[RMDB]
RNA sequence: GGGAACGACUCGAGUAGAGUCGAAAAGAGGUUGGUGUCUGAUCCGCGUACGGAAGAUACGUUCGUGCUAACUCCGAUCUUCUUGCAGAAAUCAAUUGUGAGCAUCUGGAAGGAGACAUUGGAGGAAGUGCCUGUUACGUUUCGACGUAACAGGCACAAAAGAAACAACAACAACAAC
Reactivity to 2A3 in 0.01 (KOAc 150mM, MgCl2 10mM, bicine 150mM(pH8.5), 24C), signal-to-noise 2, nucleotides 027 to 126: g160a050g000g020u100u080g070g010u050g000u040c010u020g060a070u050c000c000g000c050g050u080a060c030g000g080a080a060g030a180u130a090c050g010u000u090c000g090u060g060c000u050a120a030c000u000c000c000g030a040u010c000u020u000c000u000u070g020c010a000g000a040a030a000u010c000a090a300u300u210g230u180g100a010g020c040a080u020c000u010g020g000a010a000g010g010a000g000a000c030a040u010u100g030g020a020g000g040a020a060
Conditions: 150 mM KOAc, 10 mM MgCl2 and 150 mM bicine (pH 8.5), 24 C. An RNA of 177 nucleotides, treated with 2A3 and read out base by base. The 2A3 profile rests on 717 reads. Source: RMDB library OK1LIB, as collected in RNAgym.